[RMDB]
RNA sequence: GGGAACGACUCGAGUAGAGUCGAAAACAAGCGCGUCAGGUGCUCCGGAUGUUUGGAGCCGCUUCGCACGCCGAGUCAGCCCCAGCGAAGGUGGCCUCCUGUGCGGCCAUACACAUGCAACCUGGCCUCUAGUGAGGCUGUUCGCGGCUUCGCUAGAAAAAGAAACAACAACAACAAC
Reactivity to 2A3 in 0.01 (KOAc 150mM, MgCl2 10mM, bicine 150mM(pH8.5), 24C), signal-to-noise 2, nucleotides 027 to 126: c030a010a030g060c020g020c020g030u020c000a000g000g010u020g000c000u000c000c000g040g030a090u050g110u050u070u110g020g010a000g000c020c000g000c000u000u000c010g000c000a020c010g010c030c020g000a020g030u030c020a010g010c000c000c000c000a000g000c000g030a020a000g030g050u030g020g010c000c000u020c010c020u040g000u020g020c000g000g000c010c000a000u180a080c100a000c000a050u300g000c000a020a150c000c000u000g000g000c000c000
Reactivity to DMS in 0.01 (KOAc 150mM, MgCl2 10mM, bicine 150mM(pH8.5), 24C), signal-to-noise 3, nucleotides 027 to 126: c040a110a070g000c090g000c040g000u000c050a040g010g020u010g000c000u010c010c010g010g010a130u050g010u040u030u030g000g010a030g010c030c060g000c030u000u010c170g030c060a040c040g000c010c030g000a080g000u010c020a100g000c140c000c000c050a080g000c030g000a020a040g000g010u010g000g000c010c010u000c000c010u010g000u020g000c100g010g010c040c010a020u000a250c220a060c300a260u000g000c050a210a240c250c070u000g000g000c000c000